Chemical mapping of a 207-nucleotide RNA with DMS and 2A3. The DMS profile rests on 1,930 reads. The reactions ran in a buffer of 150 mM KOAc, 10 mM MgCl2 and 150 mM bicine (pH 8.5), at 24 C. It was measured as part of the RMDB library RNAMAK. The 2A3 profile rests on 4,548 reads.
[RMDB]
RNA sequence: GGGAACGACUCGAGUAGAGUCGAAAAGGGGUCGUCGAUUGUCAGAUGGGAAUCCAGCGAAGAACAUAGGCUGAAGCCUCCACGGCCUAUGGGAGCUGUUCUCCCAUCUUGGAUUUAUCGACGACGGAGGCACCCGUACGUCCCGUUCGCGGGACAAGCCGACUAUUAUUUUCGAAUAAUAGUCGGCAAAAGAAACAACAACAACAAC
Reactivity to DMS in 0.01 (KOAc 150mM, MgCl2 10mM, bicine 150mM(pH8.5), 24C), signal-to-noise 1, nucleotides 027 to 156: g020g050g020g000u000c010g020u010c000g030a070u010u000g030u030c030a100g040a060u030g000g010g050a050a130u000c120c030a050g000c050g030a120a170g010a180a300c000a020u000a000g020g010c010u000g010a000a180g040c020c010u010c010c040a300c010g010g000c000c010u000a010u010g000g010g000a100g010c020u000g010u000u000c090u000c000c000c020a030u000c020u000u000g000g010a080u000u010u000a030u010c000g020a060c040g030a000c010g000g030a020g030g040c000a110c030c010c000g100u020a090c100g020u000c000c000c010g020u000u000c210g060c050g000g030g000a030c010a040a150
Reactivity to 2A3 in 0.01 (KOAc 150mM, MgCl2 10mM, bicine 150mM(pH8.5), 24C), signal-to-noise 4, nucleotides 027 to 156: g060g000g010g010u000c010g000u000c000g010a010u000u030g040u070c160a130g010a020u010g000g000g000a030a030u120c210c020a030g010c000g230a300a020g000a000a000c000a000u000a000g000g000c000u040g030a110a010g030c000c000u000c000c000a010c000g010g000c000c000u000a000u000g000g000g010a020g010c000u000g010u110u020c030u000c050c000c000a000u010c000u010u200g040g010a020u060u140u160a020u010c000g000a000c000g000a000c010g000g000a000g000g020c010a020c000c000c010g030u080a100c100g000u010c030c040c020g010u060u080c300g000c010g070g000g000a000c010a010a020